[RMDB]
RNA sequence: GGGAACGACUCGAGUAGAGUCGAAAAUGUUACAAAGGCUAUGGUGUCACUAGACAAUAAGAUAUUUUCAGCUCCAUUAUAAUCUUAUGGGACCAUCAUCAUAUAUGCAAUCUGUAGUUGACUGAAUCAUAAUUAUGCAUUCCAAGAUGGUAUGUUACCCUUCUGAUCAGUUCGCUGAUCAGAAGGGAAAAGAAACAACAACAACAAC
Reactivity to 2A3 in 0.01 (KOAc 150mM, MgCl2 10mM, bicine 150mM(pH8.5), 24C), signal-to-noise 1, nucleotides 027 to 156: u090g010u000u010a060c050a130a080a040g060g010c040u040a030u000g000g000u070g070u080c040a020c040u040a110g080a170c020a060a050u090a060a010g010a020u020a060u000u070u010u040c030a030g010c000u050c080c000a060u070u030a020u060a130a140u000c080u000u070a030u010g120g000g000a040c010c020a000u020c000a000u000c000a000u040a000u010a040u170g000c010a030a080u000c070u140g150u030a100g160u250u130g080a060c000u050g080a060a020u180c030a000u020a120a060u080u150a020u230g000c000a010u030u000c030c000a060a000g030a140u080g020g000u010a060u030g040u000u060a110
Notes:
Source: RMDB library OK3TST, as collected in RNAgym. This 207-nucleotide RNA was probed chemically with 2A3. The reactions ran in a buffer of 150 mM KOAc, 10 mM MgCl2 and 150 mM bicine (pH 8.5), at 24 C.